[RMDB]
RNA sequence: GGGAACGACUCGAGUAGAGUCGAAAAACUGUAGGACGGCAGGAAGGAGCCCUCUAUGGACCUGAAAACAUCAAGGAGAACGGUACAUGUUGAUUGGAAAUAUGUCCGUGACAUAUAUUGCUAAGUUUAAAAAACUUAGGCUCCAAAGCAGCAGAUAACGUUUUAAAAUCUUCGGAUUUUAAAACGUAAAAGAAACAACAACAACAAC
Reactivity to 2A3 in 0.01 (KOAc 150mM, MgCl2 10mM, bicine 150mM(pH8.5), 24C), signal-to-noise 2, nucleotides 027 to 156: a010c060u070g020u030a020g010g060a030c030g010g000c020a010g010g070a060a050g020g000a020g010c000c030c020u000c020u050a090u080g010g040a050c020c020u070g030a060a030a030a040c070a060u100c070a050a030g020g020a050g030a050a020c060g020g010u110a020c010a040u030g030u000u020g050a170u080u150g030g040a030a060a020u080a010u060g030u000c050c090g020u050g000a000c010a010u140a020u000a040u080u250g020c000u010a000a030g020u000u020u130a080a220a030a010a000a000c010u060u010a050g020g090c010u010c020c010a000a030a020g020c020a020g030c010a050g030a070u190a060
Reactivity to DMS in 0.01 (KOAc 150mM, MgCl2 10mM, bicine 150mM(pH8.5), 24C), signal-to-noise 1, nucleotides 027 to 156: a120c000u000g010u000a130g030g020a090c060g040g000c020a060g000g010a080a080g010g000a080g010c070c040c040u000c060u000a130u000g020g010a080c010c020u020g010a070a060a110a090c080a080u000c020a100a140g000g010a070g000a090a070c080g040g000u010a080c050a060u010g010u000u000g000a250u010u010g000g020a080a110a100u000a030u000g020u000c010c030g010u000g000a090c040a010u010a060u010a150u000u000g030c000u010a000a040g010u000u000u000a010a040a070a160a090a040c010u010u000a020g010g010c040u000c020c010a030a090a130g020c010a060g000c020a080g000a190u020a130